[RMDB]
RNA sequence: GGGAACGACUCGAGUAGAGUCGAAAACAAAGUGGAAUAGUUAAAGCUCUAAAUUCACUUCAGUAUGGGGCCAACAUACUGGACUGCCAGGUCAAGGAGUGAUAAUCUUCCAGAUUUUAACUUUGAAUAAUUCCUAGGCAUUCGUGCCUAGGAAUUAAAAAGAAACAACAACAACAAC
Reactivity to DMS in 0.01 (KOAc 150mM, MgCl2 10mM, bicine 150mM(pH8.5), 24C), signal-to-noise 1, nucleotides 027 to 126: c050a080a070a110g000u010g020g020a070a100u020a000g030u000u000a010a040a140g020c000u020c010u000a030a120a090u010u000c030a020c070u000u010c020a020g010u020a000u000g010g020g050g020c140c080a010a130c010a010u000a010c000u000g010g050a020c080u000g000c260c290a060g020g000u020c080a000a120g020g030a050g020u010g010a150u000a010a130u000c140u000u010c080c090a110g000a100u010u010u010u010a030a070c020u000u020u000g000a050a030